RNA sequence: GGGAACGACUCGAGUAGAGUCGAAAACUGUCUCAAAGAUAUCCGACUUGAAUGAUAAUCAAUUGGCAAAAGGCAUGCAUGUGCUACGAAAUCAUCUUGUCACCUUAAUGGAAGCCACAUUACAUGAAUAUCAAGGUGCUUUCGAGCACCUUGAUAUAAAAGAAACAACAACAACAAC
Reactivity to DMS in 0.01 (KOAc 150mM, MgCl2 10mM, bicine 150mM(pH8.5), 24C), signal-to-noise 2, nucleotides 027 to 126: c130u010g020u000c020u000c060a100a120a130g020a110u000a060u020c070c040g000a050c080u000u000g000a050a060u000g000a040u000a030a160u010c090a090a080u020u000g000g030c070a080a080a090a050g000g020c050a020u000g000c190a040u000g000u020g020c030u000a090c180g020a030a090a100u000c010a030u000c020u000u000g000u000c020a140c100c050u000u010a020a070u010g000g010a090a110g020c030c030a080c100a030u020u000a070c130a080u000g010a100
Reactivity to 2A3 in 0.01 (KOAc 150mM, MgCl2 10mM, bicine 150mM(pH8.5), 24C), signal-to-noise 2, nucleotides 027 to 126: c020u020g040u040c000u010c060a090a110a010g040a000u060a060u070c020c020g040a040c060u080u030g070a170a050u100g040a050u080a080a120u090c090a010a090u020u080g020g000c050a030a080a080a040g000g000c050a010u050g000c020a050u120g000u000g040c000u000a100c020g040a040a030a050u020c010a030u000c000u020u030g010u040c030a030c060c000u070u110a080a010u100g030g010a040a040g000c000c010a010c030a020u090u050a050c010a090u070g160a150
Source: RMDB library OK2TST, as collected in RNAgym.
The record gives the reactivity of an RNA of 177 nucleotides to DMS and 2A3.
DMS adducts were read by reverse transcription with MarathonRT.
2A3 adducts were read by reverse transcription with SuperScript II with manganese.
Values cover nucleotides 27 to 126.